[RMDB]
RNA sequence: GGGAACGACUCGAGUAGAGUCGAAAACAGGCGUGGUGGCGCAUGCUUGCAGUCCCAGCUACUUGGGGGCCUGAGGCAGGAGAAUCGCUCGAACCCAGGAGUUGGAGGUUGCAGUGAGCUGAGAUUGUGCCACUGCACUCUAGCCUGGGUGACAGAGCUAGUACCUAAACUUCGGUUUAGGUACUAGAAAAGAAACAACAACAACAAC
Reactivity to DMS in 0.01 (KOAc 150mM, MgCl2 10mM, bicine 150mM(pH8.5), 24C), signal-to-noise 2, nucleotides 027 to 156: c050a070g030g020c020g040u000g020g020u000g000g030c060g000c030a010u000g030c010u000u000g030c010a120g010u000c000c010c030a140g020c050u000a020c090u000u010g030g010g010g020g000c060c020u000g010a080g020g010c010a090g020g020a090g010a070a090u010c050g030c010u000c010g000a120a090c000c030c010a040g010g000a080g030u010u000g010g000a020g000g020u000u000g040c020a020g030u000g010a150g030c010u030g010a240g000a240u000u000g020u010g010c000c010a040c010u000g000c000a050c020u000c010u000a050g030c010c000u000g000g000g040u000g000a080c050a080g010a110g020
Reactivity to 2A3 in 0.01 (KOAc 150mM, MgCl2 10mM, bicine 150mM(pH8.5), 24C), signal-to-noise 4, nucleotides 027 to 156: c030a000g050g010c020g010u010g010g040u030g020g070c030g020c060a020u050g030c000u050u100g020c020a040g060u020c000c010c000a000g060c030u130a100c040u090u090g010g000g000g020g080c020c010u050g010a050g010g000c020a020g010g070a050g040a040a090u120c030g000c040u000c030g030a040a030c000c000c000a000g030g030a080g060u140u120g020g010a040g020g070u220u160g010c010a010g000u020g020a110g020c020u010g040a070g070a300u160u270g130u180g060c000c000a000c000u000g000c000a000c000u010c010u010a030g010c010c000u000g000g000g000u000g000a010c020a010g020a010g000

This 207-nucleotide RNA was probed chemically with DMS and 2A3. Source: RMDB library OK3TST, as collected in RNAgym. The DMS profile rests on 7,426 reads.